[RMDB]
RNA sequence: GGGAACGACUCGAGUAGAGUCGAAAAUCGGACGGCGGCCAUGAGUCGCAACGCAAAGCCGCGGUAAGUGGAGUUAGCGAGAAGAGACUAGGCUUUGGUUUCUUCAAGUGAAGCGGUCACCAAUCAGAAUAGCUUGCGCAGUUCGCUGCGCAAGCAAACCAACUUACCAGUUCGCUGGUAAGUUGGUAAAAGAAACAACAACAACAAC
Reactivity to 2A3 in 0.01 (KOAc 150mM, MgCl2 10mM, bicine 150mM(pH8.5), 24C), signal-to-noise 1, nucleotides 027 to 156: u120c090g040g060a040c100g020g010c040g000g020c060c020a250u180g060a070g080u030c020g030c030a030a010c000g000c010a050a100a020g000c060c040g000c060g080g020u120a160a090g050u060g060g020a070g050u080u070a000g080c020g010a050g000a020a000g010a000g010a000c000u050a070g220g150c030u180u120u190g050g020u010u010u000c000u030u000c000a020a020g000u010g100a030a010g000c030g000g050u020c010a000c100c020a030a130u070c020a030g100a140a090u180a040g000c000u000u010g000c000g000c020a010g050u050u120c220g040c190u160g000c050g000c000a000a000g000c000a000a000